[RMDB]
RNA sequence: GGGAACGACUCGAGUAGAGUCGAAAAAAAAAUGUAUAGAAUGACGGUUGAAUUGAUGAAUUUAAAGGAAUUAGGAUCAUUUGAUCUGGAAAGUGUGAAUGUAUAUCCGGGUAUAUGGAAUACAUUUGAUAUAUUUGGUAUAGAAGCGGCACGAACCGUACGGAACAAUUUUCGAAUUGUUCCGUACAAAAGAAACAACAACAACAAC
Reactivity to 2A3 in 0.01 (KOAc 150mM, MgCl2 10mM, bicine 150mM(pH8.5), 24C), signal-to-noise 2, nucleotides 027 to 156: a010a020a000a000a000u190g060u070a170u120a110g060a060a020u020g010a030c050g020g010u040u030g050a090a040u130u080g030a050u040g010a050a160u050u230u120a110a040a020g030g000a020a010u080u090a050g000g030a010u000c000a010u020u140u300g020a010u000c040u040g000g090a070a050a110g030u020g020u010g060a020a000u000g020u040a000u010a050u040c040c000g010g060g060u070a070u010a010u180g000g050a020a010u030a040c000a020u050u020u060g020a000u000a000u000a040u110u060u110g030g000u070a070u050a090g100a140a000g050c040g030g010c040a000c040g100a060a010c040c060
Reactivity to DMS in 0.01 (KOAc 150mM, MgCl2 10mM, bicine 150mM(pH8.5), 24C), signal-to-noise 1, nucleotides 027 to 156: a020a030a050a020a010u010g010u010a160u010a100g010a130a070u000g040a070c020g000g000u010u010g000a050a050u000u010g020a080u010g010a130a050u000u000u000a080a050a120g030g020a100a130u020u000a210g000g000a050u020c030a210u020u000u000g000a030u000c000u030g000g010a060a010a100g050u010g020u040g010a050a020u000g010u000a030u000a020u000c090c010g000g020g030u000a090u030a030u010g040g020a120a050u000a060c040a030u000u000u010g000a100u000a010u000a050u010u000u000g010g000u010a100u000a100g010a070a130g000c070g010g000c030a060c050g010a040a060c050c020